Chemical mapping of a 177-nucleotide RNA with 2A3. Values cover nucleotides 27 to 126. For 2A3, 279 sequencing reads were counted.
RNA sequence: GGGAACGACUCGAGUAGAGUCGAAAAGAAUCACUUAUUCAAUCAGUUUAUGUGGAAAAAGCUUUGGCUUCUAUUUCACUGAUUAGGAAGCGUACGCGUCAAUAAAGAUUGAUUUUCAUUCACAUCACAGGGCGGUACCAUUCGUGGUACCGCCCUGAAAAGAAACAACAACAACAAC
Reactivity to 2A3 in 0.01 (KOAc 150mM, MgCl2 10mM, bicine 150mM(pH8.5), 24C), signal-to-noise 1, nucleotides 027 to 126: g130a000a000u040c060a000c090u120u110a030u180u230c000a080a060u000c000a110g060u000u110u000a060u060g170u020g000g020a000a050a000a000a000g000c080u040u140u160g080g000c000u000u210c250u060a270u000u000u070c190a240c050u000g000a000u130u000a050g130g000a030a030g080c090g030u020a050c250g000c040g160u000c000a040a070u220a300a030a030g020a000u110u020g000a000u000u130u000u000c190a090u160u010c080a030c080a250u020c050a020